An RNA of 207 nucleotides, treated with DMS and read out base by base.
For DMS, 1,653 sequencing reads were counted.
In probing experiments dimethyl sulfate is read out at A N1 and C N3, which are open when not base-paired.
The RNA was probed in 150 mM KOAc, 10 mM MgCl2 and 150 mM bicine (pH 8.5) at 24 C.
RNA sequence: GGGAACGACUCGAGUAGAGUCGAAAAAGAAUUGUACCACCACCGCGUAUCCUAAACGGGCUCUGCAGUGGUUAUUCUUGUAAAGUACUAGGAGUGAAUAGUGGCCCGUAUUGCAGGCAUUAACAUUAAAAGGCAAUCCACUUCGGUGGAUUGCCAACAAAGUCUUCUUCUUCGGAAGAAGACUUUGAAAAGAAACAACAACAACAAC
Reactivity to DMS in 0.01 (KOAc 150mM, MgCl2 10mM, bicine 150mM(pH8.5), 24C), signal-to-noise 1, nucleotides 027 to 156: a140g000a060a050u000u000g070u000a130c030c030a130c050c030a060c000c000g020c030g000u000a060u000c040c020u020a070a190a120c090g000g030g030c040u000c080u000g040c030a040g020u000g020g020u000u000a000u000u000c020u000u000g000u000a100a090a180g000u000a060c010u000a090g000g010a130g050u010g020a070a130u010a070g020u020g000g010c000c010c030g060u000a100u020u000g010c030a020g030g020c080a030u010u000a050a060c130a070u000u000a030a090a070a150g010g000c010a010a000u000c000c000a070c020u000u010c300g080g080u010g010g000a010u010u000g000c030c020a020a020